[RMDB]
RNA sequence: GGGAACGACUCGAGUAGAGUCGAAAACGCUGGGACGAGUGGGGGAGUCUGGUCUGAAGCGCGCACGGACCAAGGACGACGAUCCGUAACAUCUCGUCCUGUGCUGAAGCGCGCACGGCAACCGAAAGGUGCGACACGGGCAUGUUCGCAUGCCCAACACUAUACGUAACUUCGGUUACGUAUAGUGAAAAGAAACAACAACAACAAC
Reactivity to 2A3 in 0.01 (KOAc 150mM, MgCl2 10mM, bicine 150mM(pH8.5), 24C), signal-to-noise 4, nucleotides 027 to 156: c030g000c010u030g000g000g010a010c010g010a020g010u050g010g000g020g010g010a040g000u050c070u110g000g000u010c020u030g080a170a050g020c000g010c000g000c000a020c030g020g010a010c010c010a080a080g260g060a030c090g020a010c020g010a010u000c010c030g020u040a030a010c050a180u070c000u000c000g000u000c000c000u000g010u010g000c010u050g030a140a040g010c000g000c010g000c000a020c010g010g020c010a040a030c000c000g040a090a040a010g020g000u020g020c030g020a040c040a060c210g000g000g000c000a000u020g020u050u100c210g000c120a000u000g010c000c010c010a000a000
Reactivity to DMS in 0.01 (KOAc 150mM, MgCl2 10mM, bicine 150mM(pH8.5), 24C), signal-to-noise 2, nucleotides 027 to 156: c020g070c000u000g010g000g000a090c040g000a090g000u010g010g000g040g040g020a220g000u010c090u010g060g080u010c040u020g000a080a020g050c000g030c000g000c010a300c050g000g000a060c040c040a050a160g030g000a070c050g000a050c110g080a300u000c020c090g040u020a060a080c230a100u000c010u000c010g000u010c010c000u000g000u000g050c040u010g000a020a090g020c010g020c010g080c040a280c030g010g020c000a030a050c010c000g000a080a130a110g000g030u000g000c050g040a090c130a120c130g000g030g030c020a050u000g000u000u010c190g000c010a020u000g010c020c020c000a050a110